Structure probing data (2A3 and DMS) for a 177-nucleotide construct.

RNA sequence: GGGAACGACUCGAGUAGAGUCGAAAAGAUAUGGAAUAAGACAUGCAAACCAGCACGAAUUCGGAAACGAACUAUGCUGGUUGCAACAGCUUAUUCCUAAGUCAAAAGCAUUAGUUCGCUAAUGCAACCGAUAGAAACUGUUCGCAGUUUCUAUCGGAAAAGAAACAACAACAACAAC
Reactivity to 2A3 in 0.01 (KOAc 150mM, MgCl2 10mM, bicine 150mM(pH8.5), 24C), signal-to-noise 2, nucleotides 027 to 126: g020a010u080a050u160g020g000a010a020u020a000a000g050a060c040a070u080g000c020a020a190a300c000c000a000g050c030a000c050g160a080a300u040u020c000g000g060a000a060a090c020g000a000a010c040u050a020u040g020c010u020g000g020u040u000g000c000a000a050c030a000g080c010u020u000a000u000u000c000c000u010a130a010g090u020c060a030a090a060a070g000c000a010u030u010a000g030u020u110c280g000c230u010a010a010u000g000c000a030a050
Reactivity to DMS in 0.01 (KOAc 150mM, MgCl2 10mM, bicine 150mM(pH8.5), 24C), signal-to-noise 2, nucleotides 027 to 126: g010a010u020a300u000g000g010a020a010u020a020a010g020a040c080a230u000g000c000a030a090a070c010c000a010g000c000a000c100g020a030a160u000u000c020g000g000a110a040a270c000g040a000a020c100u000a250u000g000c000u000g000g010u030u000g030c020a000a100c300a030g000c010u000u000a010u000u000c000c000u010a030a100g000u020c030a040a020a120a140g000c000a000u000u000a000g020u000u010c230g000c010u000a000a000u000g020c020a100a110